[RMDB]
RNA sequence: GGGAACGACUCGAGUAGAGUCGAAAACCUGGGCUGCCGAAGCUCAGCAGCUCUGAAGUCCUUUGUGUAAGUCGCGCCGCCUUUUGGCGAGAGGAGCCAUACGAAAGCGGAUGGCCGGCAAAAGCUCGCCCUGCAAAGGCUUCGGCCUUUGCAGGGCAAAAGAAACAACAACAACAAC
Reactivity to 2A3 in 0.01 (KOAc 150mM, MgCl2 10mM, bicine 150mM(pH8.5), 24C), signal-to-noise 1, nucleotides 027 to 126: c000c000u000g000g000g000c000u000g000c000c020g140a140a050g000c090u040c010a000g040c000a000g000c000u040c000u110g220a060a000g090u040c000c050u120u080u080g240u000g000u060a120a000g000u080c010g020c000g010c020c000g080c000c000u000u190u040u040g000g000c140g000a020g000a000g280g000a030g000c000c000a000u010a190c030g160a020a110a110g110c070g130g100a100u060g150g010c000c050g040g080c030a090a090a090a090g000c000u000c000
Notes:
Structure probing data (2A3) for a 177-nucleotide construct. 2A3 adducts were read by reverse transcription with SuperScript II with manganese. For 2A3, 342 sequencing reads were counted.